Notes:
Chemical mapping of a 207-nucleotide RNA with 2A3 and DMS. For 2A3 the reverse transcriptase was SuperScript II with manganese. Conditions: 150 mM KOAc, 10 mM MgCl2 and 150 mM bicine (pH 8.5), 24 C. DMS (dimethyl sulfate) methylates the pairing face of unpaired adenines and cytosines. The 2A3 profile rests on 4,659 reads. Reactivities are rounded to 0.1 and cut off at 0 and 3.
RNA sequence: GGGAACGACUCGAGUAGAGUCGAAAAGGGGUCUAAGCUUACCCUUUUGACGCACUAUGAAGUGUACUGAAGCCUCCACGGUACAUGGAGUGCGAUAAGGGUUAUUAGGCUUAGACGGAGGCACCCAAACGUUAGAGGGGUUCGCCCCUCUAACGAAGGAAUGUAAUGCCUUCGGGCAUUACAUUCCAAAAGAAACAACAACAACAAC
Reactivity to 2A3 in 0.01 (KOAc 150mM, MgCl2 10mM, bicine 150mM(pH8.5), 24C), signal-to-noise 4, nucleotides 027 to 156: g010g020g050g000u010c000u000a000a000g010c050u140u220a070c000c000c040u000u010u010u050g130a050c020g080c000a010c000u090a300u300g000a010a010g010u000g000u010a000c000u030g040a100a030g000c000c000u000c000c000a020c010g010g010u010a010c000a000u010g000g020a010g000u010g000c000g030a000u050a000a000g050g000g030u010u060a190u140u290a050g040g000c000u010u000a000g000a010c000g000g000a000g010g020c000a030c000c010c000a060a090a010c010g000u000u000a010g000a000g020g010g020g020u020u140c240g160c010c000c000c000u010c000u000a000a000c000g010a000a000
Reactivity to DMS in 0.01 (KOAc 150mM, MgCl2 10mM, bicine 150mM(pH8.5), 24C), signal-to-noise 2, nucleotides 027 to 156: g030g020g000g030u000c010u000a000a000g000c040u000u000a150c030c000c000u040u020u030u000g030a240c090g030c030a030c020u010a220u000g020a230a300g020u000g000u000a030c020u020g000a070a130g020c000c000u000c040c010a300c030g020g010u000a010c020a070u010g020g000a040g020u000g010c000g000a100u000a020a020g020g010g040u000u000a160u000u020a090g020g000c070u010u000a030g000a050c030g000g000a040g080g020c020a090c020c000c020a050a120a200c030g000u020u000a010g010a050g010g020g000g000u000u000c270g040c020c000c000c000u010c010u000a000a020c020g010a040a110